Chemical mapping of a 177-nucleotide RNA with 2A3 and DMS. Conditions: 150 mM KOAc, 10 mM MgCl2 and 150 mM bicine (pH 8.5), 24 C. The data come from the RNA Mapping Database (RMDB), library OK1LIB. For DMS, 7,718 sequencing reads were counted.
RNA sequence: GGGAACGACUCGAGUAGAGUCGAAAAACACACACAGAGUCUGGCUGACGAAAAGAGACUGAGUCGUGUGUGUGUGUGUGUGUGUGUGUGGACUCAGGUAAUCGAAGUCUGCUGGUCUCGACAACAAGGGAUAACAUAUCUUCGGAUAUGUUAUCCCAAAAGAAACAACAACAACAAC
Reactivity to 2A3 in 0.01 (KOAc 150mM, MgCl2 10mM, bicine 150mM(pH8.5), 24C), signal-to-noise 2, nucleotides 027 to 126: a000c000a000c000a010c000a000c010a030g000a010g010u030c010u000g050g000c030u040g020a000c000g130a050a130a080a060g010a000g030a020c000u010g020a000g010u000c040g030u010g020u000g010u000g000u010g000u000g000u000g010u030g010u000g010u000g020u000g020u000g010u080g030g000a030c010u020c010a020g110g070u200a040a110u050c040g010a090a010g000u000c010u030g000c010u020g000g000u020c010u020c020g080a050c020a040a010c030a130a160
Reactivity to DMS in 0.01 (KOAc 150mM, MgCl2 10mM, bicine 150mM(pH8.5), 24C), signal-to-noise 1, nucleotides 027 to 126: a000c010a010c000a010c050a020c000a100g010a030g020u000c000u010g000g000c000u010g010a000c030g030a040a050a080a090g000a040g000a110c000u000g000a000g010u000c000g010u010g000u010g000u000g010u000g000u010g000u000g010u000g000u000g010u000g020u000g000u000g010u040g000g000a010c000u000c000a000g000g000u030a100a160u000c030g010a070a110g030u000c010u000g020c020u000g000g000u000c000u000c010g000a020c050a030a020c080a070a130